Source: RMDB library OK3TST, as collected in RNAgym. Chemical mapping of a 207-nucleotide RNA with 2A3. For 2A3, 411 sequencing reads were counted.

RNA sequence: GGGAACGACUCGAGUAGAGUCGAAAAGCUAAUAAUGCGGCAUUGCUCACCAGGCGAAUAGAAAGAAAUCAUCUUGCCGAUUGUGUCUUUACCAGCGCCAGGCGGCGCAUUGAGGAUUAUAAUUUUAGCCAUCUUUAUUCACCUUAAAAUAUUGAACUCGUCCAGAGAAAUUCGUUUCUCUGGACGAAAAAGAAACAACAACAACAAC
Reactivity to 2A3 in 0.01 (KOAc 150mM, MgCl2 10mM, bicine 150mM(pH8.5), 24C), signal-to-noise 1, nucleotides 027 to 156: g010c000u000a030a030u130a070a020u250g090c000g040g020c020a050u030u110g000c000u000c030a050c030c050a060g000g000c000g000a040a060u080a150g050a030a080a020g010a000a090a040u160c080a000u010c040u050u060g000c000c010g020a030u030u090g020u000g020u000c030u000u000u000a040c030c050a010g010c010g000c020c010a140g140g000c130g000g000c020g040c030a010u050u050g000a000g030g000a000u000u110a010u160a080a220u160u090u020u070a000g030c000c010a050u010c000u030u100u090a100u090u040c050a060c040c000u110u120a060a100a080a050u300a200u240u240g250a040a050c030